Chemical mapping of a 177-nucleotide RNA with 2A3 and DMS. Source: RMDB libraries RFM100 and RFMREP, as collected in RNAgym. Conditions: 150 mM KOAc, 10 mM MgCl2 and 150 mM bicine (pH 8.5), 24 C.
RNA sequence: GGGAACGACUCGAGUAGAGUCGAAAAGGUGGCUGCCAGAUGGGUGCUCUCUACUAGUGCUGUGCAGAGGCUUUCCCUGAGGCUGCUGUGAGCCUGUAGGGUUUGCCCCUAGGCUACGAAGCUGGAAAGCAUACCGCUAAUUCGUUAGCGGUAUGCUAAAAGAAACAACAACAACAAC
Reactivity to 2A3 in 0.01 (KOAc 150mM, MgCl2 10mM, bicine 150mM(pH8.5), 24C), signal-to-noise 4, nucleotides 027 to 126: g040g010u040g010g020c070u050g030c030c010a060g040a220u180g010g050g030u190g000c020u030c000u000c010u050a060c030u100a040g060u060g250c020u060g080u070g140c010a000g030a020g000g000c010u050u050u060c070c060c000u060g030a020g030g000c020u040g000c010u030g050u020g040a000g010c000c020u020g060u040a050g040g020g000u010u130u220g000c000c010c010c000u010a050g010g000c000u050a060c050g060a030a000g010c040u050g040g000a160a100
Reactivity to DMS in 0.01 (KOAc 150mM, MgCl2 10mM, bicine 150mM(pH8.5), 24C), signal-to-noise 2, nucleotides 027 to 126: g000g040u010g000g000c020u000g020c040c040a080g020a120u020g000g000g010u000g010c060u000c010u000c010u010a030c030u020a040g000u040g000c030u020g020u000g010c020a010g010a170g010g000c010u000u000u020c090c100c040u030g000a180g000g000c000u000g050c010u000g000u000g090a010g010c000c000u000g030u010a030g010g000g010u000u010u040g020c030c000c000c040u000a090g020g010c000u010a030c040g000a110a060g010c020u000g000g000a130a110